RNA sequence: GGGAACGACUCGAGUAGAGUCGAAAAACUUUUUGAUUCGUCAAAAAGUAACUACCGAGAAUGCGACUCGGUUUACGCAAAUAACCCUUGGAAACAAGGGAACAAACUAACGUUUCGACGUUAGUAAGAGUUGUGUAAUGUUCGCAUUACACAACUCAAAAGAAACAACAACAACAAC
Reactivity to 2A3 in 0.01 (KOAc 150mM, MgCl2 10mM, bicine 150mM(pH8.5), 24C), signal-to-noise 3, nucleotides 027 to 126: a000c000u030u000u010u000u010g010a010u020u060c100g030u010c040a000a000a000a000a000g000u010a030a030c010u020a010c010c010g000a000g020a090a100u240g050c090g070a030c030u010c010g030g000u000u060u030a020c020g000c050a090a070a040u130a110a170c000c000c000u010u000g040g020a030a040a010c000a000a000g000g000g010a010a010c000a000a110a000c000u010a010a000c000g010u020u030u130c260g100a010c000g000u020u000a000g020u020a030a040
Reactivity to DMS in 0.01 (KOAc 150mM, MgCl2 10mM, bicine 150mM(pH8.5), 24C), signal-to-noise 2, nucleotides 027 to 126: a060c030u010u000u000u000u000g010a010u000u010c130g000u010c000a010a030a030a000a020g020u020a060a140c070u010a050c000c010g030a010g000a120a070u010g010c090g000a070c020u000c000g010g000u000u000u000a050c250g020c150a050a080a100u010a100a090c000c000c000u000u010g000g000a240a150a120c020a010a000g000g010g010a030a030c170a060a060a040c020u000a000a000c000g020u000u000u000c160g010a030c010g020u000u000a010g010u010a040a110
An RNA of 177 nucleotides, treated with 2A3 and DMS and read out base by base. Source: RMDB library M2PK50, as collected in RNAgym. The RNA was probed in 150 mM KOAc, 10 mM MgCl2 and 150 mM bicine (pH 8.5) at 24 C. For 2A3 the reverse transcriptase was SuperScript II with manganese.